[RMDB]
RNA sequence: GGGAACGACUCGAGUAGAGUCGAAAAUCUAUUGUGGAUUGCUUGUGUGCUGGCAGGCUACUACUGGUAAGAAUGGCUAGUGUCAGCAGGGAUGGCUCCUCUCUGGGUUCCAUCUCACCAAGAUGAGCUUAUGCUAAUAUUUCGAUAUUAGCAUAAGAAAAGAAACAACAACAACAAC
Reactivity to DMS in 0.01 (KOAc 150mM, MgCl2 10mM, bicine 150mM(pH8.5), 24C), signal-to-noise 9, nucleotides 027 to 126: u010c020u000a100u020u010g020u010g010g010a090u000u010g000c040u000u010g000u010g020u010g010c000u000g010g020c010a050g000g010c010u000a040c090u010a120c070u010g010g020u020a090a060g010a130a170u010g000g000c010u000a090g010u000g010u000c010a010g010c020a120g000g000g010a030u000g010g000c090u000c010c010u000c250u020c210u020g010g000g000u000u000c010c000a010u000c000u000c000a150c150c070a040a060g000a100u010g010a100g010
Reactivity to 2A3 in 0.01 (KOAc 150mM, MgCl2 10mM, bicine 150mM(pH8.5), 24C), signal-to-noise 9, nucleotides 027 to 126: u030c020u040a150u080u180g050u100g050g050a130u070u090g030c030u060u030g030u010g040u050g130c000u000g000g000c000a020g010g030c000u020a020c010u030a040c030u080g170g080u220a100a050g050a130a090u080g020g000c020u050a100g250u030g000u040c000a000g000c010a000g010g000g000a010u010g000g000c010u020c000c010u030c040u010c090u140g040g000g000u050u000c000c000a000u000c000u000c010a050c020c030a030a020g040a140u130g040a020g030